[RMDB]
RNA sequence: GGGAACGACUCGAGUAGAGUCGAAAAGUACGGCAGGGGCGAGGCUAAGGAGUGAAACUCCGAAGCCGGAGGGAAACCGACAGCCCGCAGCUUAUGCGAGGGGCGGGGUGUGCUCGCCUGUAGUCCCUUUAAGGCGUCGCUUCGGCGACGCCUUAAAAAAAGAAACAACAACAACAAC
Reactivity to DMS in 0.01 (KOAc 150mM, MgCl2 10mM, bicine 150mM(pH8.5), 24C), signal-to-noise 1, nucleotides 027 to 126: g000u000a030c100g000g050c000a190g090g020g030g020c000g010a150g020g060c000u020a060a300g050g020a030g000u000g000a250a030a300c000u020c000c000g000a300a160g010c020c050g010g040a140g000g000g000a040a090a080c100c000g010a120c090a010g000c000c000c040g000c040a050g020c010u020u000a220u110g000c100g000a240g040g000g000g000c000g000g000g000g030u020g000u000g000c020u000c000g000c000c000u020g040u000a010g000u000c000c000c010